RNA sequence: GGGAACGACUCGAGUAGAGUCGAAAACUUCACACCCGAGAUAGGUCUUUUUGAGGUUGCGCUUAACCCACUCGGGCGUUGCGUCGGUACGUCCUGAGUUAAUCAGGUAUUCGCUGAUUUCCGCGUACCACAUGUGACUAAGUGCGUUCUGGCUCAGUCACCGCAGGUGAUUCGUCACCUGCGGUGAAAAAGAAACAACAACAACAAC
Reactivity to 2A3 in 0.01 (KOAc 150mM, MgCl2 10mM, bicine 150mM(pH8.5), 24C), signal-to-noise 1, nucleotides 027 to 156: c010u050u070c020a020c000a030c060c010c010g000a020g020a130u240a080g090g020u130c130u030u260u140u090u260g060a090g060g020u090u140g060c070g020c050u050u070a040a040c000c000c000a020c000u010c010g000g030g020c000g050u120u080g030c030g000u000c080g000g020u000a000c020g000u060c000c050u030g030a030g070u130u120a040a040u020c000a000g070g020u040a190u090u200c100g000c080u020g040a050u000u060u040c000c000g000c000g000u000a000c000c000a000c020a020u090g000u020g030a020c020u040a040a010g020u030g070c010g030u110u000c050u000g070g000c000u000c030a000g060